[RMDB]
RNA sequence: GGGAACGACUCGAGUAGAGUCGAAAAUGUCUUCUAUCACUUAUUCCAUUAACCAAAGCUGCCACCUCACAUAACACAAUAAUUUAUUUUCACUUGAACAUUUAGGUUUUAAAGGGACUUAUUCUCAGAGACAUGUUAGGAAUCAAAAUAGAAAUAGCAACGCUAACGGAUUCGUCCGUUAGCGUUGAAAAGAAACAACAACAACAAC
Reactivity to 2A3 in 0.01 (KOAc 150mM, MgCl2 10mM, bicine 150mM(pH8.5), 24C), signal-to-noise 3, nucleotides 027 to 156: u060g030u000c040u050u020c020u030a120u070c020a010c080u090u050a000u090u040c000c020a060u060u050a000a040c000c020a120a050a000g020c040u030g000c040c030a080c000c000u050c000a060c000a070u140a150a000c010a010c030a100a120u150a090a050u060u150u100a160u060u050u070u100c030a040c040u020u060g030a040a010c000a120u040u110u220a070g000g060u050u030u030u090a050a040a050g010g010g000a000c010u090u040a040u110u040c040u000c030a040g060a020g010a100c010a030u070g030u020u080a040g000g060a050a020u070c030a080a030a060a110u140a050g050a030a040a040u180a040g020
Reactivity to DMS in 0.01 (KOAc 150mM, MgCl2 10mM, bicine 150mM(pH8.5), 24C), signal-to-noise 1, nucleotides 027 to 156: u000g020u000c080u020u020c020u000a210u000c100a110c050u000u000a060u000u000c000c000a170u000u020a140a090c010c030a070a110a110g030c040u000g000c030c020a060c000c020u010c060a080c030a090u000a060a050c120a060c020a090a030u000a080a110u040u000u000a060u060u010u000u010c060a080c020u000u000g020a050a090c060a140u000u000u000a090g010g020u000u000u000u020a080a140a090g000g000g010a040c030u000u000a040u000u000c050u030c020a060g010a060g050a060c090a060u030g010u000u000a080g010g020a050a140u020c080a080a050a030a040u000a080g000a110a010a120u000a150g020